[RMDB]
RNA sequence: GGGAACGACUCGAGUAGAGUCGAAAAUGGGGGAAUACCUAGUAUUGUCCCCGGUGACCGUGUUGCGCACCAGGAAACUGGCCAUUCUGCUCGGACCACUCGCGGAAGAAGUGAUGCAGUAUGUCCACCCCCUACCUAUUUUCGAAUAGGUAGGGGGAAAAGAAACAACAACAACAAC
Reactivity to 2A3 in 0.01 (KOAc 150mM, MgCl2 10mM, bicine 150mM(pH8.5), 24C), signal-to-noise 2, nucleotides 027 to 126: u110g000g020g030g000g040a040a000u000a010c030c100u040a120g020u010a030u050u090g290u160c030c000c010c020g000g010u030g010a090c010c000g020u080g080u140u160g070c110g000c010a030c020c010a040g130g000a060a060a050c060u030g020g030c020c010a020u050u020c010u000g060c010u020c060g060g110a100c080c000a030c010u030c060g000c070g100g010a080a060g030a080a010g080u040g070a030u130g000c000a010g000u060a030u060g020u000c000c000a040
Reactivity to DMS in 0.01 (KOAc 150mM, MgCl2 10mM, bicine 150mM(pH8.5), 24C), signal-to-noise 4, nucleotides 027 to 126: u000g020g030g020g020g010a020a020u000a010c020c170u010a170g020u000a020u000u000g000u010c010c010c010c030g000g000u000g010a130c020c040g020u010g030u010u010g020c080g010c100a090c040c020a060g010g000a080a080a150c100u010g020g010c090c040a060u000u000c040u000g010c050u000c120g010g000a090c080c090a070c030u010c080g020c060g000g010a130a110g010a080a070g000u000g010a140u000g030c020a040g000u000a020u000g000u000c010c040a290
Source: RMDB library OK2TRN, as collected in RNAgym. This 177-nucleotide RNA was probed chemically with 2A3 and DMS. The RNA was probed in 150 mM KOAc, 10 mM MgCl2 and 150 mM bicine (pH 8.5) at 24 C. For 2A3 the reverse transcriptase was SuperScript II with manganese. Reactivities are given for positions 27 through 126. The DMS profile rests on 3,936 reads. DMS adducts were read by reverse transcription with MarathonRT.